[RMDB]
Background:
This 207-nucleotide RNA was probed chemically with 2A3. For 2A3 the reverse transcriptase was SuperScript II with manganese. Reactivities are given for positions 27 through 156. The reactions ran in a buffer of 150 mM KOAc, 10 mM MgCl2 and 150 mM bicine (pH 8.5), at 24 C. The 2A3 profile rests on 576 reads. The data come from the RNA Mapping Database (RMDB), library RNAMAK.
RNA sequence: GGGAACGACUCGAGUAGAGUCGAAAACAAGCCCUUCGGGGCUUGAAAAAAGCGUACUACUUAGACAUGUGGAGGUGUCAACAGCGCUCCCAAAUAGGAGCGACAUGACGCGAAGCAACAGCUAAGUAUCGCAAAAAAGUGACUUUCGAGUCACUAAGUUAUGUAUCGGCUUCGGCCGAUACAUAACAAAAGAAACAACAACAACAAC
Reactivity to 2A3 in 0.01 (KOAc 150mM, MgCl2 10mM, bicine 150mM(pH8.5), 24C), signal-to-noise 1, nucleotides 027 to 156: c000a000a010g030c030c000c000u010u070c190g010g000g000g010c050u000u000g110a030a000a010a000a030a000g040c030g040u150a140c080u000a000c010u010u000a000g070a100c050a140u040g020u080g000g080a180g250g090u030g000u000c010a030a040c030a140g060c010g000c010u020c000c040c070a230a300a160u300a080g000g020a040g020c000g080a100c020a070u100g000a000c030g000c030g070a000a030g000c030a000a030c040a050g030c000u040a000a000g000u010a010u240c060g000c000a020a000a140a000a000a000g000u000g010a000c020u050u100u090c230g110a000g000u000c000a000c070u030a030a000